[RMDB]
RNA sequence: GGGAACGACUCGAGUAGAGUCGAAAAUAUACGAAAGCAGAAUCUCCAGUCAAAGCGCGUCCAAUUACUAAGGCAUUAAUUUCAUGUGUACCUUCGUACGUGUAAAUCGCUUCUGCAUCAGAGAAGAACAGAACCUGAUAUUCGUAUCAGGUUCUGUAAAAGAAACAACAACAACAAC
Reactivity to 2A3 in 0.01 (KOAc 150mM, MgCl2 10mM, bicine 150mM(pH8.5), 24C), signal-to-noise 4, nucleotides 027 to 126: u150a000u020a030c060g070a060a040a030g020c040a030g070a060a080u020c000u010c020c020a020g040u050c040a080a060a020g040c010g010c010g010u020c050c010a040a030u070u050a060c050u070a060a000g030g020c000a020u090u160a080a150u110u180u120c080a070u130g030u010g030u150a100c000c020u020u040c070g010u020a040c030g020u020g020u070a060a140a080u090c030g010c000u050u050c010u020g030c010a050u060c020a030g080a010g010a180a010g010a010
Reactivity to DMS in 0.01 (KOAc 150mM, MgCl2 10mM, bicine 150mM(pH8.5), 24C), signal-to-noise 3, nucleotides 027 to 126: u070a070u040a090c150g010a120a080a070g010c030a000g010a050a120u000c020u000c040c010a050g000u000c060a060a070a110g000c020g000c080g000u010c020c010a060a060u010u010a040c120u010a040a090g010g040c070a010u000u010a030a110u030u010u030c040a050u000g000u060g010u010a070c040c010u000u000c070g010u020a020c050g010u000g030u030a030a050a080u020c030g010c000u000u000c040u000g020c040a060u020c100a050g000a090g000a100a060g010a120